RNA sequence: GGGAACGACUCGAGUAGAGUCGAAAAUAAUCAAGAUGAAUCGUUUUUAGUUUGCUUGCUUACCUUAUGGGCCAGAAUGAGAUCUACUUGAAUCUUUUUAUGUAGGCAGAUAGCGACGGAAUUUAAACCUAUGAUGAUGGUUCGCCAUCAUCAUAGGAAAAGAAACAACAACAACAAC
Reactivity to 2A3 in 0.01 (KOAc 150mM, MgCl2 10mM, bicine 150mM(pH8.5), 24C), signal-to-noise 6, nucleotides 027 to 126: u190a010a090u110c050a030a020g080a180u140g060a060a100u070c050g070u030u040u020u000u080a130g000u020u040u080g040c010u010u020g010c000u040u040a070c010c000u090u120a080u170g030g030g000c040c010a080g060a110a080u070g010a050g010a040u000c020u060a080c040u120u110g030a020a020u020c010u010u090u030u020u010a110u120g010u020a000g010g000c000a020g020a100u090a020g010c010g030a010c000g030g040a040a020u080u110u110a140a070a020
Reactivity to DMS in 0.01 (KOAc 150mM, MgCl2 10mM, bicine 150mM(pH8.5), 24C), signal-to-noise 4, nucleotides 027 to 126: u030a120a100u040c090a040a070g000a120u030g010a100a080u030c060g000u000u000u020u040u030a060g000u010u000u010g010c020u010u000g000c020u010u010a090c000c070u010u020a070u020g000g010g010c080c060a080g000a040a050u010g000a060g000a060u000c030u010a060c100u020u000g000a100a040u000c010u010u020u000u020u010a040u010g010u010a020g000g020c060a010g000a030u000a060g010c110g020a010c060g000g020a030a050u010u010u020a050a080a180